This 177-nucleotide RNA was probed chemically with 2A3 and DMS. Source: RMDB library M2PK50, as collected in RNAgym.
[RMDB]
RNA sequence: GGGAACGACUCGAGUAGAGUCGAAAAGACUACCAGUUCGCUGGUAGUCAAAGGGAAACGGGAUGGCGGCGGCGUCCGCCGUAACAAACGCAAAAAGAAAAAAAAGACGAAGCUUCGGCUUCGUCAAUCUGUAAGGAGAGUUCGCUCUCCUUACAGAAAAAGAAACAACAACAACAAC
Reactivity to 2A3 in 0.01 (KOAc 150mM, MgCl2 10mM, bicine 150mM(pH8.5), 24C), signal-to-noise 1, nucleotides 027 to 126: g000a000c000u000a030c000c000a000g000u040u030c160g050c110u000g000g000u000a010g000u010c000a030a000a000g040g020g010a010a110a050c060g050g000g060a100u180g020g000c000g020g000c070g010g000c010g120u250c000c030g000c000c000g020u000a010a000c000a000a030a020c000g000c080a000a050a000a080a050g130a090a060a010a000a000a000a010a030g000a000c010g010a010a000g010c010u030u140c260g060g010c010u000u030c000g010u000c000a000a010
Reactivity to DMS in 0.01 (KOAc 150mM, MgCl2 10mM, bicine 150mM(pH8.5), 24C), signal-to-noise 2, nucleotides 027 to 126: g030a000c000u000a000c000c000a020g010u000u020c150g060c030u020g000g020u000a000g010u010c000a020a090a160g000g000g010a040a050a090c050g010g010g000a140u000g000g000c000g020g000c020g010g000c010g010u010c000c030g000c000c000g040u010a000a220c090a030a050a030c000g020c010a080a110a090a090a090g020a090a030a020a090a070a100a130a250g000a010c000g000a020a000g010c010u000u010c180g010g000c000u000u000c000g010u000c000a030a020
Record summary: For 2A3, 1,842 sequencing reads were counted. For DMS, 1,795 sequencing reads were counted.